[RMDB]
The data come from the RNA Mapping Database (RMDB), library OK1LIB. Structure probing data (2A3 and DMS) for a 177-nucleotide construct. For 2A3 the reverse transcriptase was SuperScript II with manganese. The DMS profile rests on 1,405 reads. The RNA was probed in 150 mM KOAc, 10 mM MgCl2 and 150 mM bicine (pH 8.5) at 24 C. For DMS the reverse transcriptase was MarathonRT.
RNA sequence: GGGAACGACUCGAGUAGAGUCGAAAAGAUUUGAGCCGAAACACAUCUGAAUGUGAAGUAUAUACCGUUCUGACUACGAUAAGGAUGGUGUGUACAACCACACAGAAAGGCUCGACGUAGUCAGAUAGCUAGACCUUGAUUUCGAUCAAGGUCUAGCAAAAGAAACAACAACAACAAC
Reactivity to 2A3 in 0.01 (KOAc 150mM, MgCl2 10mM, bicine 150mM(pH8.5), 24C), signal-to-noise 2, nucleotides 027 to 126: g180a030u030u040u050g000a000g000c030c000g070a080a150a020c130a010c020a060u040c040u120g110a250a230u030g090u040g080a040a130g070u000a020u000a040u050a130c030c040g010u050u000c000u000g110a050c000u020a010c160g190a210u030a160a060g050g060a040u060g000g000u020g000u000g000u000a010c030a020a040c090c000a030c000a020c000a000g070a040a120a010g000g000c000u000c000g000a000c050g000u050a060g050u010c020a040g010a080u080a000
Reactivity to DMS in 0.01 (KOAc 150mM, MgCl2 10mM, bicine 150mM(pH8.5), 24C), signal-to-noise 2, nucleotides 027 to 126: g000a140u000u000u010g000a040g000c000c000g000a230a150a060c300a110c140a090u010c080u000g000a110a090u040g000u020g000a180a250g010u000a000u000a070u000a040c000c060g000u020u010c020u000g000a080c070u020a230c220g000a120u060a270a080g010g000a010u000g000g000u040g050u000g000u000a070c090a000a070c120c000a120c040a040c000a040g020a130a060a040g000g000c000u000c050g010a040c080g000u000a030g000u000c010a040g010a070u080a120